[RMDB]
RNA sequence: GGGAACGACUCGAGUAGAGUCGAAAAAGGUGAUAGUGCCGCAGGCCUUGAAGUGAUUUUAAAUUCACAAAAAAAUGUGAAGGGAGAGUUAGAAAAGGAGUUAGAAAAACGUCAUUAUUACUCAACACGGUCAUAAAUGGUUCGCCAUUUAUGACCGAAAAGAAACAACAACAACAAC
Reactivity to 2A3 in 0.01 (KOAc 150mM, MgCl2 10mM, bicine 150mM(pH8.5), 24C), signal-to-noise 3, nucleotides 027 to 126: a000g090g020u050g000a050u040a020g070u040g000c050c000g010c040a020g050g100c000c000u040u030g070a140a020g070u030g060a070u000u010u030u260a030a100a080u040u070c000a000c000a040a160a020a000a000a000a140u120g030u020g010a020a000g000g070g010a170g010a010g010u070u090a060g110a040a110a000a060g030g030a050g030u080u140a080g200a080a140a030a000a000c020g000u000c020a010u030u030a040u010u040a020c020u000c090a020a160c040a040
Reactivity to DMS in 0.01 (KOAc 150mM, MgCl2 10mM, bicine 150mM(pH8.5), 24C), signal-to-noise 2, nucleotides 027 to 126: a090g010g000u020g000a050u000a040g030u000g000c010c000g050c040a060g010g020c030c010u000u000g000a130a120g010u020g000a090u000u010u000u020a010a070a160u000u000c010a020c000a000a000a030a100a070a050a130u010g000u020g000a060a010g000g030g000a060g020a030g000u000u000a050g020a070a070a030a100g000g000a020g010u020u000a060g000a100a040a080a060a100c050g000u000c070a030u010u000a070u010u000a000c030u000c040a030a090c160a120
This 177-nucleotide RNA was probed chemically with 2A3 and DMS. For 2A3, 1,549 sequencing reads were counted. For DMS the reverse transcriptase was MarathonRT. The RNA was probed in 150 mM KOAc, 10 mM MgCl2 and 150 mM bicine (pH 8.5) at 24 C. For 2A3 the reverse transcriptase was SuperScript II with manganese.